[RMDB]
RNA sequence: GGGAACGACUCGAGUAGAGUCGAAAAGGUUACAUUGCUGGAAUACAGAAUUUUAAGGAAACGCUGUAUUAUCAGAACAAUGUCUUUAUGUCUGAAGCUAAAUGCUGGGUGGAAACCGAUCUGAAGACCUGUUAGUGAUGUUCGCAUCACUAACAGGAAAAGAAACAACAACAACAAC
Reactivity to 2A3 in 0.01 (KOAc 150mM, MgCl2 10mM, bicine 150mM(pH8.5), 24C), signal-to-noise 1, nucleotides 027 to 126: g050g000u030u070a020c000a000u000u030g000c010u000g010g000a000a030u030a020c040a000g030a030a030u110u120u060u130a220a130g250g020a000a000a000c060g020c020u010g020u000a000u000u010a060u040c000a020g020a090a070c000a020a020u010g030u020c000u080u070u040a110u150g030u030c020u070g100a040a020g000c030u050a150a030a020u140g020c000u030g000g080g020u120g010g010a080a020a000c000c010g000a080u000c020u090g050a030a010g060a060
Reactivity to DMS in 0.01 (KOAc 150mM, MgCl2 10mM, bicine 150mM(pH8.5), 24C), signal-to-noise 2, nucleotides 027 to 126: g000g010u000u010a050c020a010u000u010g000c010u000g000g010a030a000u000a010c000a010g020a080a060u020u000u000u020a100a240g010g000a060a040a030c300g000c000u000g000u000a010u000u010a130u010c000a030g000a120a130c000a010a030u000g000u000c040u020u020u010a110u010g000u000c030u000g000a090a020g000c020u020a050a110a080u000g000c020u000g000g010g010u010g000g000a090a100a110c050c060g010a070u030c070u000g010a120a090g000a150

Background:
Conditions: 150 mM KOAc, 10 mM MgCl2 and 150 mM bicine (pH 8.5), 24 C. This 177-nucleotide RNA was probed chemically with 2A3 and DMS. For DMS, 1,116 sequencing reads were counted. For 2A3, 746 sequencing reads were counted. It was measured as part of the RMDB library 15KREP.